RNA sequence: GGGAACGACUCGAGUAGAGUCGAAAAAUGGUGCCGAUAUACUCAGUCAUUUGUUUGUUAAGGCAUCAUAUCGGGAUGAUCUUAUGCUGACUAGCCCAUAUUUGGAUGAAAAAGCAGCAAAAAAGUGAAACUGACAAGACUUCGGUCUUGUCAGUUUAAAAGAAACAACAACAACAAC
Reactivity to DMS in 0.01 (KOAc 150mM, MgCl2 10mM, bicine 150mM(pH8.5), 24C), signal-to-noise 3, nucleotides 027 to 126: a050u000g010g000u000g010c020c030g010a180u010a020u000a020c020u000c030a070g010u040c240a140u050u040u020g020u000u030u000g000u000u000a120a160g000g030c000a010u000c000a000u000a030u040c060g020g030g010a090u020g000a080u020c010u000u000a110u000g000c000u000g000a120c050u000a180g000c150c000c020a100u030a130u010u040u010g010g010a130u030g000a050a050a070a100a070g020c010a000g010c000a010a020a080a060a030a050g030u000g000
Reactivity to 2A3 in 0.01 (KOAc 150mM, MgCl2 10mM, bicine 150mM(pH8.5), 24C), signal-to-noise 2, nucleotides 027 to 126: a010u010g000g000u030g000c030c020g030a050u100a000u020a220c000u000c060a030g180u040c010a180u220u070u210g080u010u090u070g040u060u070a080a100g020g010c000a000u000c000a000u010a030u000c030g140g080g060a050u070g010a010u110c010u030u110a130u060g000c020u000g000a250c000u010a070g080c000c050c000a030u040a190u150u130u130g010g000a020u030g110a020a080a070a000a000g030c030a000g000c000a000a000a000a000a000a180g100u190g000
Structure probing data (DMS and 2A3) for a 177-nucleotide construct. 2A3 adducts were read by reverse transcription with SuperScript II with manganese. For 2A3, 780 sequencing reads were counted.